[RMDB]
RNA sequence: GGGAACGACUCGAGUAGAGUCGAAAAGAUAUGGAGAGUCGCGAUAAGCUCGGUGUCGGAAACGACACAGAGCUUUUGACGCGACCUCCUAAGUCAAAACGAACAAUACCUUCGGGUAUUGUUCGAAGACUCGAGAUAAGUUCGCUUAUCUCGAGUCAAAAGAAACAACAACAACAAC
Reactivity to 2A3 in 0.01 (KOAc 150mM, MgCl2 10mM, bicine 150mM(pH8.5), 24C), signal-to-noise 2, nucleotides 027 to 126: g000a000u040a030u100g000g000a000g030a050g000u000c010g030c010g040a100u040a260a040g010c010u030c010g030g000u000g000u000c010g010g000a050a040a040c000g000a000c010a000c010a010g000a000g000c010u010u010u020u050g020a000c000g000c010g010a000c000c000u010c010c000u000a050a010g010u000c040a030a010a070a160c040g000a000a000c000a000a020u010a020c020c000u030u150c300g040g000g020u010a000u020u000g000u000u000c000g000a010a010
Reactivity to DMS in 0.01 (KOAc 150mM, MgCl2 10mM, bicine 150mM(pH8.5), 24C), signal-to-noise 3, nucleotides 027 to 126: g010a050u010a300u010g010g000a020g020a190g010u000c000g020c000g010a140u000a020a030g000c000u000c000g020g030u000g020u000c010g000g010a060a040a150c000g010a010c000a000c010a010g000a010g010c010u000u000u000u010g010a210c040g000c000g000a010c000c000u000c000c000u010a000a040g010u010c030a100a060a110a240c000g000a000a010c000a010a000u000a010c000c000u000u010c210g020g000g020u000a000u000u000g000u000u000c000g010a030a110
The record gives the reactivity of an RNA of 177 nucleotides to 2A3 and DMS. The reactions ran in a buffer of 150 mM KOAc, 10 mM MgCl2 and 150 mM bicine (pH 8.5), at 24 C. For 2A3, 4,688 sequencing reads were counted. DMS (dimethyl sulfate) methylates the pairing face of unpaired adenines and cytosines.